[RMDB]
RNA sequence: GGGAACGACUCGAGUAGAGUCGAAAAGAUAUGGAUGUCAUGGGCAACGAAGAACUCGGAAACGAGGGAGUUGGCCAUGAGCAUCCUAAGUCAAAGAUGUAACCGCUGUUCGCAGCGGUUACAUCAACUAAUAAGUAGUCUUCGGACUACUUAUUAGAAAAGAAACAACAACAACAAC
Reactivity to DMS in 0.01 (KOAc 150mM, MgCl2 10mM, bicine 150mM(pH8.5), 24C), signal-to-noise 6, nucleotides 027 to 126: g010a060u000a300u000g000g000a000u000g020u000c000a010u000g010g000g000c010a010a010c000g010a130a150g010a100a190c000u000c000g010g010a140a110a210c010g010a010g000g000g000a070g010u000u000g000g000c000c000a000u000g000a070g000c000a010u000c000c000u000a020a120g010u000c030a090a110a120g000a010u000g000u000a000a010c000c000g010c000u000g000u000u010c200g020c010a010g010c000g000g000u010u000a000c000a000u000c010a040a180
Reactivity to 2A3 in 0.01 (KOAc 150mM, MgCl2 10mM, bicine 150mM(pH8.5), 24C), signal-to-noise 2, nucleotides 027 to 126: g050a020u090a030u160g010g000a000u020g010u040c000a000u010g000g030g090c000a000a000c000g160a300a150g050a060a020c000u000c000g000g040a050a060a040c020g000a010g000g010g020a050g000u020u000g040g120c000c000a000u000g000a000g000c010a000u010c000c000u010a090a010g040u030c040a120a040a060g000a010u010g000u010a020a000c020c000g000c040u010g060u090u130c300g000c130a000g000c000g000g010u000u000a000c000a010u000c000a010a000